[RMDB]
RNA sequence: GGGAACGACUCGAGUAGAGUCGAAAAGUUCGCCGUUCGCGGCGAACAAAAAGCGUACUACAAGUGGUACAGGGAGCAGUACAUCCCAAAUAGGAUGUCCUGCAUCGAUCUGUACGUAACAUCUUGUAUCGCAAAAACUCAGGGUUCGCCCUGAGAACAAGAAUGUAGUGUUCGCACUACAUUCUUGAAAAGAAACAACAACAACAAC
Reactivity to DMS in 0.01 (KOAc 150mM, MgCl2 10mM, bicine 150mM(pH8.5), 24C), signal-to-noise 3, nucleotides 027 to 156: g010u010u000c000g030c020c010g100u010u020c300g040c040g060g030c010g000a010a000c010a020a020a080a090a120g000c030g030u000a080c140u000a040c010a020a010g020u010g000g010u000a010c000a020g000g000g010a080g020c000a030g020u000a020c010a030u000c000c010c010a020a120a240u000a030g000g000a020u000g020u000c040c000u000g020c000a100u000c100g000a040u010c000u000g010u000a000c020g030u010a070a050c070a030u000c020u010u000g010u010a040u000c010g030c010a070a060a120a110a110c010u000c000a010g010g010g040u000u020c130g040c020c000c020u020g000a000g000a070a260
Reactivity to 2A3 in 0.01 (KOAc 150mM, MgCl2 10mM, bicine 150mM(pH8.5), 24C), signal-to-noise 6, nucleotides 027 to 156: g000u000u010c000g010c020c010g020u050u080c300g020c010g080g020c000g010a000a000c000a000a000a000a000a020g030c050g030u110a070c040u000a000c040a010a000g000u010g010g000u020a000c000a000g010g030g000a030g000c000a000g000u010a000c000a000u010c030c030c030a160a240a140u300a060g000g000a000u000g000u040c010c000u010g030c010a120u150c010g020a060u010c000u000g000u000a000c000g020u010a040a020c010a190u070c010u000u000g010u010a030u300c010g000c000a000a000a010a080a120c000u000c000a010g030g020g010u080u080c140g100c030c000c000u010g000a010g000a000a020
Structure probing data (DMS and 2A3) for a 207-nucleotide construct. Conditions: 150 mM KOAc, 10 mM MgCl2 and 150 mM bicine (pH 8.5), 24 C. It was measured as part of the RMDB library RNAMAK. For 2A3, 9,072 sequencing reads were counted.